[RMDB]
RNA sequence: GGGAACGACUCGAGUAGAGUCGAAAAUCUAGUCUAUUCGUAGACUAGAAAAGACUGCUGCCGGCAGGGUUGACUGCGCCGAGCAGAAACGGCAAACGAAAAAAACUCUUGCUUUCGAGCAAGAGAAAGAACAUGUGUAAUUCGUUACACAUGUUCUAAAAGAAACAACAACAACAAC
Reactivity to DMS in 0.01 (KOAc 150mM, MgCl2 10mM, bicine 150mM(pH8.5), 24C), signal-to-noise 5, nucleotides 027 to 126: u000c000u000a000g000u010c000u000a020u000u010c150g030u000a020g010a020c000u000a010g000a010a080a140a130g010a150c040u000g010c010u000g010c100c010g030g000c000a300g000g000g020u020u010g000a280c030u000g000c080g000c050c040g010a100g010c020a030g000a030a090a120c070g000g020c110a050a080a100c130g000a000a000a080a050a080a120a140c000u000c000u000u000g000c010u000u000u020c190g010a020g000c000a010a000g000a010g000a010a030
Reactivity to 2A3 in 0.01 (KOAc 150mM, MgCl2 10mM, bicine 150mM(pH8.5), 24C), signal-to-noise 3, nucleotides 027 to 126: u010c000u010a000g000u010c000u010a040u020u050c130g070u040a000g000a010c000u010a000g000a000a030a000a000g020a010c020u010g020c010u010g030c040c000g040g000c000a020g100g020g080u290u300g070a110c020u040g010c080g000c030c010g030a030g000c000a000g000a070a080a000c030g070g000c060a090a090a040c090g110a070a030a020a010a000a030a090c000u000c000u010u010g010c000u070u050u180c290g060a010g020c000a000a000g010a000g000a030a020
Description:
Structure probing data (DMS and 2A3) for a 177-nucleotide construct. For 2A3, 4,171 sequencing reads were counted. The reactions ran in a buffer of 150 mM KOAc, 10 mM MgCl2 and 150 mM bicine (pH 8.5), at 24 C.